[RMDB]
Chemical mapping of a 177-nucleotide RNA with DMS and 2A3.
Reactivities are given for positions 27 through 126.
For DMS the reverse transcriptase was MarathonRT.
Source: RMDB library M2PK50, as collected in RNAgym.
For 2A3 the reverse transcriptase was SuperScript II with manganese.
RNA sequence: GGGAACGACUCGAGUAGAGUCGAAAAUCAGUUCACUUCGGUGAACUGAAAAAUGGCAGCUAUGAGCUUAAGUGUCAUAGCAAAAGAUCGAAAGAUCAAAAAAAACCAUGGACUUCGGUCCAUGGAACUUUAUCUUCUUCUUCGGAAGAAGAUAAAGAAAAGAAACAACAACAACAAC
Reactivity to DMS in 0.01 (KOAc 150mM, MgCl2 10mM, bicine 150mM(pH8.5), 24C), signal-to-noise 3, nucleotides 027 to 126: u000c000a000g000u000u000c000a000c000u010u020c200g030g020u000g000a010a000c000u000g000a010a020a050a120a100u000g010g010c010a260g000c010u000a000u010g010a030g010c000u000u000a080a160g010u010g010u000c000a010u010a000g020c000a130a040a100a110g010a000u010c010g000a160a060a160g010a010u000c000a000a010a000a060a060a060a090a150c000c010a000u000g000g000a010c000u000u000c180g000g010u000c000c000a010u000g000g000a010a010
Reactivity to 2A3 in 0.01 (KOAc 150mM, MgCl2 10mM, bicine 150mM(pH8.5), 24C), signal-to-noise 3, nucleotides 027 to 126: u000c000a000g000u000u010c010a000c020u020u090c150g140g000u000g000a000a000c000u000g000a010a010a000a000a000u090g040g000c000a010g010c010u000a000u010g000a010g030c020u150u270a170a010g090u150g010u300c000a000u010a000g000c000a030a030a010a070g010a010u000c010g040a050a040a020g000a010u000c000a010a000a000a050a030a000a020a050c000c000a000u000g000g010a000c020u030u040c290g080g000u000c000c000a000u000g000g000a000a000